[RMDB]
RNA sequence: GGGAACGACUCGAGUAGAGUCGAAAACGAAGGCAUCUAGAUGGGGGCAUUUGUUUGGUGGCUCUCCUCCCUCAGGGAGGAAAUUGCUUAGACUGCAUCAGCCUGCUGCCUGCUUUCAAGUCUCAUUCUCCAUCUGGGUCAGAAAUCCUUUAUAAAAGUCGUCCUAAAUGUUCGCAUUUAGGACGACAAAAGAAACAACAACAACAAC
Reactivity to 2A3 in 0.01 (KOAc 150mM, MgCl2 10mM, bicine 150mM(pH8.5), 24C), signal-to-noise 1, nucleotides 027 to 156: c080g050a050a010g080g000c070a050u050c050u080a010g000a010u010g010g000g000g030g010c000a040u030u070u140g150u170u070u150g050g000u010g000g020c000u020c000u010c070c000u000c010c030c010u260c110a050g010g000g010a000g020g010a000a010a050u140u040g040c000u040u000a030g010a160c130u090g050c010a090u010c020a050g050c000c000u060g010c020u000g010c040c000u010g040c050u020u090u200c080a070a000g030u000c040u000c140a200u230u050c020u000c010c010a020u040c010u040g000g020g030u020c000a020g110a010a060a020u050c040c000u090u070u100a290u160a010a130a100a060
Source: RMDB library OK3TST, as collected in RNAgym. The record gives the reactivity of an RNA of 207 nucleotides to 2A3. The reactions ran in a buffer of 150 mM KOAc, 10 mM MgCl2 and 150 mM bicine (pH 8.5), at 24 C.